[RMDB]
RNA sequence: GGGAACGACUCGAGUAGAGUCGAAAAUACCGUCUUCUCCCCGACGGUUUCAAUCCAUAGCUUCACGUUGUGUAGCGUAGGUGGAAGGUAUCGUGUGGUGUAUCAACACCACAUAGUCUCUUAGGGGUCAAGCUGAUAAACUUCGGUUUAUCAGCAAGCAAGAGGAAGGAUUCGUCCUUCCUCUUGCAAAAGAAACAACAACAACAAC
Reactivity to DMS in 0.01 (KOAc 150mM, MgCl2 10mM, bicine 150mM(pH8.5), 24C), signal-to-noise 2, nucleotides 027 to 156: u000a050c010c030g020u000c010u000u000c030u000c000c010c000c110g010a060c030g020g000u020u010u010c040a090a090u000c030c010a080u000a210g000c040u000u020c030a030c030g010u000u010g040u000g010u000a080g020c040g040u010a040g050g010u000g000g010a070a080g040g020u010a050u000c090g020u010g010u010g010g030u010g020u010a190u000c230a110a300c000a020c010c000a020c000a000u000a070g020u000c030u000c000u000u000a100g060g000g010g000u000c030a040a220g000c000u000g010a020u000a010a000a020c010u000u000c270g070g010u000u000u000a010u000c000a010g020c000a000a050
Reactivity to 2A3 in 0.01 (KOAc 150mM, MgCl2 10mM, bicine 150mM(pH8.5), 24C), signal-to-noise 5, nucleotides 027 to 156: u050a010c000c000g020u020c020u170u030c050u090c010c000c000c010g000a010c000g000g060u000u030u050c050a040a040u010c000c010a020u020a120g000c020u050u080c020a040c090g300u300u300g010u080g000u050a000g020c030g080u100a100g000g130u040g020g030a050a030g080g020u110a050u150c040g000u000g010u000g020g000u010g030u060a240u260c070a050a090c000a000c010c000a000c000a000u000a000g020u000c010u000c010u070u200a020g010g010g000g010u030c070a100a050g000c000u000g000a000u000a000a000a000c000u020u050c140g070g010u020u000u000a000u000c000a000g000c000a000a010